[RMDB]
An RNA of 177 nucleotides, treated with DMS and read out base by base. The reactions ran in a buffer of 150 mM KOAc, 10 mM MgCl2 and 150 mM bicine (pH 8.5), at 24 C. DMS adducts were read by reverse transcription with MarathonRT.
RNA sequence: GGGAACGACUCGAGUAGAGUCGAAAAGAUAUGGACCCUGAAUAGUAACAAGGAGCAACAGCUGUUCCAAGGCUCGGAAACGAGCCUUGGAACAGACAUGCUCCCGCCCUAUCAGGGUCCUAAGUCAGUUAUAAAGGGGGUUCGCCCCCUUUAUAACAAAAGAAACAACAACAACAAC
Reactivity to DMS in 0.01 (KOAc 150mM, MgCl2 10mM, bicine 150mM(pH8.5), 24C), signal-to-noise 1, nucleotides 027 to 126: g000a000u000a300u000g000g000a000c000c010c000u030g000a120a120u010a000g020u000a050a140c190a190a100g000g010a020g000c010a060a080c290a240g010c040u000g000u010u020c020c000a040a000g030g020c000u020c000g020g000a100a100a290c010g010a010g020c000c000u000u010g030g030a000a000c010a010g000a010c130a150u010g000c000u000c000c010c030g000c300c210c010u010a030u000c010a010g010g000g000u000c000c000u010a000a050g010u010c010a140